Structure probing data (2A3 and DMS) for a 207-nucleotide construct.
[RMDB]
RNA sequence: GGGAACGACUCGAGUAGAGUCGAAAACAAACUACAGCCUUUUUUAGGGAUGCAUGCAUGGUUGGUAAAAUUAUAAGGGAAAGCAAGGAAGUAAUUUUGAUAAAAGUCAGAAUUGGGAUUUCCUCUAGAGCAUGGCAGGGGGUAGUAGCUGAGAGGGUAACCUGUAUAUGUUCGCAUAUACAGGUUAAAAAGAAACAACAACAACAAC
Reactivity to 2A3 in 0.01 (KOAc 150mM, MgCl2 10mM, bicine 150mM(pH8.5), 24C), signal-to-noise 2, nucleotides 027 to 156: c020a030a060a030c040u140a050c090a060g040c040c000u130u130u070u120u160u160a060g030g010g010a010u100g040c040a020u080g020c030a020u060g000g040u040u010g000g040u050a010a020a080a080u120u140a050u060a180a010g030g010g000a090a000a000g020c050a030a020g020g010a000a040g000u030a010a050u000u060u040u000g010a010u050a090a190a040a020g100u020c000a000g020a070a040u040u040g030g010g110a030u020u040u020c010c000u010c010u040a060g000a020g050c020a020u060g060g000c020a020g050g000g000g010g010u020a020g000u020a010g020c050u030g020a000g000a010g070g000g020
Reactivity to DMS in 0.01 (KOAc 150mM, MgCl2 10mM, bicine 150mM(pH8.5), 24C), signal-to-noise 3, nucleotides 027 to 156: c030a100a140a140c030u000a050c030a060g020c000c000u010u010u000u010u010u000a060g040g000g010a050u000g000c030a030u000g030c050a100u020g010g010u010u000g020g010u000a050a070a060a070u000u000a080u000a100a070g010g010g000a090a060a080g020c030a040a080g000g030a050a090g000u010a020a040u000u000u000u000g020a060u010a030a070a040a300g000u000c010a020g020a020a050u010u000g000g010g000a110u000u000u000c000c030u000c040u000a100g010a090g050c030a010u010g010g020c050a080g030g030g010g020g040u000a050g030u000a060g010c050u000g000a060g020a080g030g020g010